[RMDB]
RNA sequence: GGGAACGACUCGAGUAGAGUCGAAAAGAGGUCUCAACACACACUGGCAACUGGGAGGACCCGCACCACCUCUCAUAUGCCACUAAGUGAGUUAUAUAAUAGUGGCAUAAUCUCACUGGUGCGGGUGAGAGGUGUUGCCAGACCUCCUAGAGACCUACUUCUCAGGUGAUUUCGAUCACCUGAGAAGAAAAGAAACAACAACAACAAC
Reactivity to 2A3 in 0.01 (KOAc 150mM, MgCl2 10mM, bicine 150mM(pH8.5), 24C), signal-to-noise 2, nucleotides 027 to 156: g090a010g000g000u020c010u010c010a110a130c080a020c050a010c000a020c130u010g010g000c030a040a040c020u040g060g040g000a060g040g070a090c000c010c010g040c030a100c010c000a010c000c010u070c000u000c040a040u010a020u030g010c000c030a000c010u010a040a060g050u080g210a060g050u300u020a090u040a020u070a200a210u040a060g010u010g000g010c000a020u000a020a030u040c090u020c030a060c050u050g010g020u160g020c070g020g000g000u000g000a030g010a000g010g070u030g000u000u010g000c000c010a000g010a040c010c030u060c000c020u060a020g000a000g000a000c000c020u000a050